[RMDB]
The record gives the reactivity of an RNA of 177 nucleotides to DMS. The data come from the RNA Mapping Database (RMDB), library TTRINS. Conditions: 150 mM KOAc, 10 mM MgCl2 and 150 mM bicine (pH 8.5), 24 C.
RNA sequence: GGGAACGACUCGAGUAGAGUCGAAAAGAUAUGGAAGUUCGGGAGUGGCUGAGCCGAGAGCGUUUGACGAAGGUCGGAAACGACCUUCCGAGCUCGAGGCUCAGCCGAGAACGAACUUCCUAAGUCAGUUCGAAUUAAAGUUCGCUUUAAUUCGAACAAAAGAAACAACAACAACAAC
Reactivity to DMS in 0.01 (KOAc 150mM, MgCl2 10mM, bicine 150mM(pH8.5), 24C), signal-to-noise 1, nucleotides 027 to 126: g000a080u010a300u040g000g000a080a010g010u000u010c000g010g000g000a300g040u020g000g010c010u000g010a000g000c010c000g020a280g000a000g020c010g000u020u010u010g020a210c300g000a000a040g020g020u000c000g010g000a150a080a190c000g020a050c030c000u000u030c000c000g000a050g050c000u000c000g000a300g000g030c040u000c000a010g050c000c030g000a010g000a290a250c000g000a000a020c000u000u000c000c000u010a040a170g000u000c050a210